This 177-nucleotide RNA was probed chemically with 2A3. Source: RMDB library OK1LIB, as collected in RNAgym. Values are in units of 0.01, from 0 to 300, in steps of 10.

RNA sequence: GGGAACGACUCGAGUAGAGUCGAAAAAGGCGUCGGGAACGCAACAAUAGUUGGAGGAUUUCGUGCUCCUGUCGUUCCUUCAACCGGUGACGAGCACCAGUUUCUUUUCCCUGCUCCCGUACUCCAGCGAUGCGAGGGAGUUCGCUCCCUCGCAUCGAAAAGAAACAACAACAACAAC
Reactivity to 2A3 in 0.01 (KOAc 150mM, MgCl2 10mM, bicine 150mM(pH8.5), 24C), signal-to-noise 1, nucleotides 027 to 126: a000g010g010c000g010u010c040g000g020g040a110a000c010g070c040a090a000c000a000a230u110a100g020u050u080g050g000a070g050g020a110u290u000u080c120g010u150g000c000u000c000c000u000g070u080c010g040u090u000c000c000u000u020c010a000a040c060c020g030g030u020g110a150c120g050a040g060c030a020c000c000a000g000u000u020u100c000u000u000u000u030c020c000c000u000g000c000u020c030c000c000g030u020a070c000u000c000c000a020g000